RNA sequence: GGGAACGACUCGAGUAGAGUCGAAAAAUGCUUCGCGUUGGCGAAGGACGGGCCGUCAAGCGCCUGAAGAAGAUCGCUGAUGAUGUGAUCGCACUUGAGGCGGAUUACACCGAUCUUACUGACGAGGACGUGUUCUCGUAUUCGUACGAGAACACGUAAAAGAAACAACAACAACAAC
Reactivity to 2A3 in 0.01 (KOAc 150mM, MgCl2 10mM, bicine 150mM(pH8.5), 24C), signal-to-noise 1, nucleotides 027 to 126: a020u120g040c040u020u020c000g000c020g110u110u130g170g000c030g020a020a010g020g030a000c020g000g000g000c110c030g020u060c040a020a030g060c010g030c010c020u050g020a000a000g020a010a000g000a010u020c020g000c070u080g060a300u140g000a010u090g110u020g000a000u000c000g000c050a020c040u040u090g050a090g080g000c000g010g040a030u050u060a020c040a020c030c010g060a110u000c040u000u120a100c040u030g040a000c030g030a070g090g080
Reactivity to DMS in 0.01 (KOAc 150mM, MgCl2 10mM, bicine 150mM(pH8.5), 24C), signal-to-noise 2, nucleotides 027 to 126: a070u020g000c080u000u000c000g000c040g000u000u000g050g010c010g020a020a020g000g000a080c040g010g010g020c080c060g020u010c150a030a120g000c110g010c000c000u000g020a040a040g000a120a160g010a020u000c010g020c110u000g010a210u010g000a140u000g020u000g000a010u000c010g030c110a170c010u010u000g010a080g010g010c000g000g000a100u010u000a050c040a070c030c010g000a080u000c000u000u000a130c040u000g010a030c050g000a110g010g000
This 177-nucleotide RNA was probed chemically with 2A3 and DMS. Values cover nucleotides 27 to 126. DMS adducts were read by reverse transcription with MarathonRT. 2A3 adducts were read by reverse transcription with SuperScript II with manganese. Conditions: 150 mM KOAc, 10 mM MgCl2 and 150 mM bicine (pH 8.5), 24 C.